[RMDB]
RNA sequence: GGGAACGACUCGAGUAGAGUCGAAAAAGUAUCGGGUUCGCCCGAUACUGUUGGCGCGCGGCCUUUGUCCUGACGCGCGUAUAUUGCGCGCGAUAUACGCGCAUGUGGGGUCGUUCGCGACCCCAAAUGAUAUUGCCUUGUUCGCAAGGCAAUAUCAAAAAGAAACAACAACAACAAC
Reactivity to DMS in 0.01 (KOAc 150mM, MgCl2 10mM, bicine 150mM(pH8.5), 24C), signal-to-noise 2, nucleotides 027 to 126: a000g010u000a010u000c000g010g000g010u000u000c220g030c000c000c000g010a000u000a000c000u000g000u000u000g000g000c030g010c010g000c020g020g000c120c110u000u010u000g010u000c010c010u010g020a090c150g010c000g020c000g010u000a020u000a020u000u000g000c010g010c040g000c000g000a020u000a010u000a020c000g010c000g020c010a070u010g010u000g010g000g010g010u000c010g020u000u000c130g020c010g000a010c000c000c000c000a000a010a030
Reactivity to 2A3 in 0.01 (KOAc 150mM, MgCl2 10mM, bicine 150mM(pH8.5), 24C), signal-to-noise 2, nucleotides 027 to 126: a010g010u000a010u000c000g000g000g020u060u060c200g080c040c010c000g000a000u000a000c000u000g000u000u080g060g010c020g010c000g020c020g040g270c050c050u100u070u120g050u020c010c010u040g050a040c050g000c000g000c020g000u000a010u000a000u000u100g020c020g010c010g000c000g000a010u020a000u000a040c020g010c000g130c020a010u130g040u040g070g000g000g000u000c000g020u010u050c210g000c000g080a020c050c000c000c000a020a000a000